This 207-nucleotide RNA was probed chemically with 2A3. For 2A3, 397 sequencing reads were counted.

RNA sequence: GGGAACGACUCGAGUAGAGUCGAAAAAUUAGCCUUAUUGUUCAGAUGAUCACAAAGAUGGUUAUCUUCAAUAGCAUUUCCGGCAUGAUGGGCGGCUCAACCUGGACGCUUGGAAGCCUUUUAAGCGGUGCUGGUUUUGCUGGCGGCGGUUAUACUGGCCUGCAUAGGAAUUCGUUCCUAUGCAGGCAAAAGAAACAACAACAACAAC
Reactivity to 2A3 in 0.01 (KOAc 150mM, MgCl2 10mM, bicine 150mM(pH8.5), 24C), signal-to-noise 1, nucleotides 027 to 156: a040u050u030a030g000c020c010u010u010a000u000u000g030u010u010c000a000g000a040u000g010a120u030c010a050c040a160a170a020g110a130u110g030g080u070u150a010u010c000u230u260c060a020a090u000a040g000c010a010u000u000u000c000c000g040g020c050a040u090g070a040u110g040g000g170c030g020g000c030u030c020a020a020c000c000u030g100g160a070c070g010c080u040u050g040g050a070a050g080c010c000u130u100u030u100a090a040g070c150g070g020u010g000c000u010g010g070u000u000u000u110g020c000u010g000g030c020g000g000c010g050g050u050u070a070u110a070c040u100g040